Structure probing data (2A3 and DMS) for a 177-nucleotide construct. For DMS, 1,411 sequencing reads were counted. 2A3 adducts were read by reverse transcription with SuperScript II with manganese. The 2A3 profile rests on 702 reads. The reactions ran in a buffer of 150 mM KOAc, 10 mM MgCl2 and 150 mM bicine (pH 8.5), at 24 C. For DMS the reverse transcriptase was MarathonRT. Values cover nucleotides 27 to 126.

[RMDB]
RNA sequence: GGGAACGACUCGAGUAGAGUCGAAAAGAAUGGUCUUGACAAUUCAAAAUCAUUUCAUGAAAACCUAGUGUAUCAAGGCUUGAUAACCUGAGAAGUGAAGUACAUAGUGACUAGGUAAAUGAACAUAAAGGAUUGAGUGAUUCGUCACUCAAUCCUUAAAAGAAACAACAACAACAAC
Reactivity to 2A3 in 0.01 (KOAc 150mM, MgCl2 10mM, bicine 150mM(pH8.5), 24C), signal-to-noise 1, nucleotides 027 to 126: g020a070a010u010g030g020u000c010u010u020g030a000c050a240a300u120u000c000a030a100a050a000u050c030a030u110u050u030c060a020u090g100a010a200a000a000c000c000u000a010g000u030g010u050a010u110c020a040a040g050g000c000u040u000g030a040u160a130a020c050c000u040g100a080g080a150a030g050u090g150a150a000g050u000a030c010a090u150a050g190u070g090a020c020u000a000g000g000u020a050a030a000u020g000a000a030c030a090u220a160
Reactivity to DMS in 0.01 (KOAc 150mM, MgCl2 10mM, bicine 150mM(pH8.5), 24C), signal-to-noise 2, nucleotides 027 to 126: g020a050a000u010g000g010u000c010u010u000g000a080c300a140a130u020u020c000a020a030a030a010u010c020a040u000u000u000c040a050u000g010a090a080a060a090c020c000u000a000g000u000g010u010a070u000c020a080a070g020g000c020u000u000g020a100u020a030a140c040c010u000g010a120g010a110a200g020u010g010a040a080g000u020a060c040a050u000a100g010u000g020a020c000u000a020g000g010u000a050a120a040u010g000a050a060c230a070u050a030